RNA sequence: GGGAACGACUCGAGUAGAGUCGAAAAUCGAGCUCCUCUGCCUUUCUUCUUGUGGAGAUCCACUUUUCGAGGAUUUCUUCCCUUCCUCCCCUCCGGCCCUUCCUCGACUCGGGUUGGCUCAUCCUCGCAAUUAGCCAAACUUCGGUUUGGCUAAUUGAAAAGAAACAACAACAACAAC
Reactivity to DMS in 0.01 (KOAc 150mM, MgCl2 10mM, bicine 150mM(pH8.5), 24C), signal-to-noise 1, nucleotides 027 to 126: u010c110g000a100g020c050u000c030c010u010c020u000g000c050c020u000u010u000c010u000u000c060u000u010g030u000g020g000a080g010a060u000c020c010a100c080u000u010u020u020c130g010a120g000g000a050u000u000u000c060u010u000c030c020c010u000u000c000c000u000c000c010c020c020u000c020c040g020g000c050c050c030u000u000c050c010u000c030g010a050c020u000c030g010g010g010u000u000g020g000c100u010c030a070u000c040c030u000c120g020